[RMDB]
Structure probing data (2A3 and DMS) for a 177-nucleotide construct. The data come from the RNA Mapping Database (RMDB), library OK1LIB. For 2A3 the reverse transcriptase was SuperScript II with manganese. The RNA was probed in 150 mM KOAc, 10 mM MgCl2 and 150 mM bicine (pH 8.5) at 24 C. The 2A3 profile rests on 2,118 reads.
RNA sequence: GGGAACGACUCGAGUAGAGUCGAAAAGGGAGAACCGAGCAGAGGCAUAGCGAACUGCGCACGGCGAAGCCUUGAGGGAAAGCCGUAGGACCCGGGUUCGAUUCCCGGCCGCUCCACCGAAGGGCCACCGUGCGUCAUAUUUCGAUAUGACGCACGGAAAAGAAACAACAACAACAAC
Reactivity to 2A3 in 0.01 (KOAc 150mM, MgCl2 10mM, bicine 150mM(pH8.5), 24C), signal-to-noise 2, nucleotides 027 to 126: g040g040g010a120g010a040a030c030c020g000a010g010c030a010g040a020g020g030c030a080u070a010g070c040g040a050a010c020u030g000c010g010c040a000c010g000g000c070g010a080a000g040c000c000u040u080g020a080g020g000g030a030a000a010g020c050c060g080u070a020g000g110a050c050c020c000g000g010g000u030u060c070g030a060u030u060c010c000c000g000g010c000c030g050c020u030c000c000a040c010c010g020a010a000g000g000g000c000c010a010
Reactivity to DMS in 0.01 (KOAc 150mM, MgCl2 10mM, bicine 150mM(pH8.5), 24C), signal-to-noise 2, nucleotides 027 to 126: g000g000g000a080g000a090a050c050c030g000a120g000c140a080g040a060g060g050c050a110u010a110g010c000g010a050a080c140u000g000c090g010c100a120c040g000g040c060g010a100a080g020c070c000u000u010g060a260g020g010g000a080a180a170g000c010c230g010u000a100g000g000a100c130c000c040g000g000g000u000u000c270g000a280u000u010c000c000c000g000g040c040c050g000c000u000c060c000a220c000c010g010a180a040g010g000g000c010c100a210